This 207-nucleotide RNA was probed chemically with 2A3.
Reactivities are given for positions 27 through 156.
It was measured as part of the RMDB library OK3TST.
Conditions: 150 mM KOAc, 10 mM MgCl2 and 150 mM bicine (pH 8.5), 24 C.
RNA sequence: GGGAACGACUCGAGUAGAGUCGAAAAUGGAAAACGCAAAGAAACGCUAAUUGAAGCCGCACUGUAACUUCAUCUCUUCAGACUAAAGUAAACAUGGAACUAAAGUCUACCUGCUUCACGGGUCGCUGUGAGAACUGAUGAAGGGACUGUGGAGUCAGGUCAGUACUCAUUUCGAUGAGUACUGACCAAAAGAAACAACAACAACAAC
Reactivity to 2A3 in 0.01 (KOAc 150mM, MgCl2 10mM, bicine 150mM(pH8.5), 24C), signal-to-noise 1, nucleotides 027 to 156: u140g010g020a020a040a000a020c090g070c030a040a020a080g050a030a090a010c010g000c030u020a000a110u090u140g130a050a000g040c090c010g000c060a050c120u020g000u000a060a000c010u040u000c000a020u040c050u000c030u150u060c030a060g000a000c010u030a210a000a160g050u030a030a130a010c070a070u160g190g000a000a000c000u120a070a000a080g000u000c000u030a030c000c040u030g080c130u090u120c120a100c040g020g010g020u090c080g000c210u150g000u030g020a030g000a000a040c050u110g000a000u000g010a000a000g030g040g030a000c020u000g050u020g000g000a020g060u030c030a000